[RMDB]
Chemical mapping of a 207-nucleotide RNA with 2A3 and DMS. The reactions ran in a buffer of 150 mM KOAc, 10 mM MgCl2 and 150 mM bicine (pH 8.5), at 24 C. For DMS the reverse transcriptase was MarathonRT. For 2A3, 498 sequencing reads were counted.

RNA sequence: GGGAACGACUCGAGUAGAGUCGAAAAAUUUGACCCCGUGUUCGAGACUCUCAAAAACAUUUUAAAUCUCACUUGGGUCAUUGGUUGUAUGUCUCCUUUCUAGACAGGUACCACGCGCCGCUUUGAUCUCUGCACCUUCGCAGCAGAAAUUGGGGUAUACUACUAGGCUAUUCGUAGCCUAGUAGUAAAAAGAAACAACAACAACAAC
Reactivity to 2A3 in 0.01 (KOAc 150mM, MgCl2 10mM, bicine 150mM(pH8.5), 24C), signal-to-noise 1, nucleotides 027 to 156: a000u040u070u020g000a030c010c000c010c010g000u060g020u130u200c110g000a040g020a040c020u060c120u140c300a000a130a130a080a000c050a070u210u260u130u300a070a170a050u080c010u000c000a010c000u060u030g020g010g000u060c020a010u060u090g070g000u000u030g050u010a190u060g010u000c000u020c000c000u010u140u080c010u020a020g020a110c020a030g050g030u040a010c000c050a030c080g070c060g000c030c000g020c000u110u060u140g060a140u030c030u000c000u030g010c000a110c030c010u260u150c110g030c010a060g000c010a010g000a040a080a000u030u050g000g000g030g000u040a050
Reactivity to DMS in 0.01 (KOAc 150mM, MgCl2 10mM, bicine 150mM(pH8.5), 24C), signal-to-noise 1, nucleotides 027 to 156: a120u010u010u000g010a090c040c000c000c060g000u000g000u020u000c090g030a130g010a050c040u000c110u000c070a070a050a140a080a150c070a120u000u000u000u000a010a110a040u010c000u000c000a060c030u000u000g010g000g020u000c010a050u000u000g000g020u000u000g030u000a110u010g000u000c010u000c040c000u000u000u000c050u000a100g010a140c040a080g030g000u000a020c000c050a070c040g010c070g000c020c020g030c040u010u030u000g000a030u000c020u000c010u020g000c020a190c070c090u000u000c080g030c090a220g000c010a020g010a020a020a070u000u000g000g000g020g000u000a160